An RNA of 207 nucleotides, treated with DMS and 2A3 and read out base by base. The RNA was probed in 150 mM KOAc, 10 mM MgCl2 and 150 mM bicine (pH 8.5) at 24 C. Reactivities are rounded to 0.1 and cut off at 0 and 3. 2A3 adducts were read by reverse transcription with SuperScript II with manganese. For 2A3, 3,577 sequencing reads were counted.
[RMDB]
RNA sequence: GGGAACGACUCGAGUAGAGUCGAAAAACAGAAGGGUGAAAGUUCAAGCAAGCUAGCCGGCAAAAAAGCAAACUUGACCACCAAGGAUAAAAGAGAUCUUAUCCAAGGAUGCAAAAGAUAAUGUCACAAAAGCUUCAUUCGUUCGCGAAUGAAGCAAGAAAACAUAUUUCUUCGGAAAUAUGUUUUCAAAAGAAACAACAACAACAAC
Reactivity to DMS in 0.01 (KOAc 150mM, MgCl2 10mM, bicine 150mM(pH8.5), 24C), signal-to-noise 2, nucleotides 027 to 156: a160c060a100g020a100a050g000g020g050u000g000a070a110a040g000u000u000c030a100a060g000c020a050a290g030c000u000a270g060c010c030g000g000c030a000a040a080a090a050a100g000c030a000a100a020c020u000u000g000a110c080c010a130c000c010a040a300g010g000a010u000a000a030a040a070g040a170g000a100u000c070u000u000a020u000c000c020a050a290g000g020a050u000g040c030a030a060a080a030g060a050u000a020a060u000g010u000c030a080c080a020a020a080a150g020c010u000u000c000a030u000u000c000g020u010u000c270g060c040g000a030a000u000g000a020a000g020c020a020a010
Reactivity to 2A3 in 0.01 (KOAc 150mM, MgCl2 10mM, bicine 150mM(pH8.5), 24C), signal-to-noise 4, nucleotides 027 to 156: a010c030a010g090a090a050g060g020g010u040g040a130a060a030g030u130u080c050a040a000g010c020a100a000g010c020u040a020g010c020c020g060g000c070a070a070a050a040a030a020g040c030a070a040a020c020u030u040g020a040c010c010a000c010c010a030a030g000g010a010u020a040a050a020a010g130a020g010a020u020c020u020u030a000u000c000c010a000a020g030g010a020u070g030c030a050a070a040a010g020a010u120a130a070u160g040u060c040a030c030a090a100a030a010g000c000u000u000c000a000u000u000c000g040u010u060c200g000c010g130a000a000u000g000a000a000g000c000a000a000